[RMDB]
RNA sequence: GGGAACGACUCGAGUAGAGUCGAAAAGGGGUCCCUGCGAUUCUCGUUGUCAGUCACGAUAAGUACACUGAAGCCUCCACGGUGUACUUUUGACGUGACUUGGAUUUACGAGGGCAGGGACGGAGGCACCCAAAACCUAUACGUUCGCGUAUAGGAACAUCUAGGAAUACUUCGGUAUUCCUAGAUGAAAAGAAACAACAACAACAAC
Reactivity to DMS in 0.01 (KOAc 150mM, MgCl2 10mM, bicine 150mM(pH8.5), 24C), signal-to-noise 1, nucleotides 027 to 156: g000g050g030g060u000c000c000c010u010g040c070g020a130u000u010c000u000c010g020u000u030g030u000c050a050g010u000c000a020c010g000a180u020a090a010g010u000a020c000a000c000u010g000a080a160g010c000c020u000c020c000a300c010g000g000u000g000u000a020c000u000u000u010u020g000a160c030g040u010g000a020c000u000u040g030g010a090u000u000u010a060c020g010a020g010g020g040c000a040g010g020g040a010c030g050g000a000g030g090c000a160c010c010c000a080a130a100a130c000c020u000a020u000a010c010g010u000u010c300g000c010g040u000a000u000a000g030g000a030a100
Reactivity to 2A3 in 0.01 (KOAc 150mM, MgCl2 10mM, bicine 150mM(pH8.5), 24C), signal-to-noise 5, nucleotides 027 to 156: g010g010g040g000u020c010c000c000u010g000c030g300a300u250u080c000u000c020g080u100u300g010u020c010a000g000u000c000a010c000g070a090u030a130a010g000u010a010c000a010c000u030g050a120a030g020c000c000u000c000c010a010c010g000g000u000g010u010a010c000u010u010u020u080g200a120c010g000u000g000a000c010u000u090g050g010a020u090u160u300a080c000g000a000g000g020g020c000a000g000g010g000a000c000g000g000a000g000g000c010a040c010c000c000a010a070a050a110c010c000u000a000u000a000c000g020u020u060c290g010c000g140u000a000u000a000g000g000a000a030
Chemical mapping of a 207-nucleotide RNA with DMS and 2A3. For 2A3 the reverse transcriptase was SuperScript II with manganese. Conditions: 150 mM KOAc, 10 mM MgCl2 and 150 mM bicine (pH 8.5), 24 C. It was measured as part of the RMDB library RNAMAK. For DMS the reverse transcriptase was MarathonRT.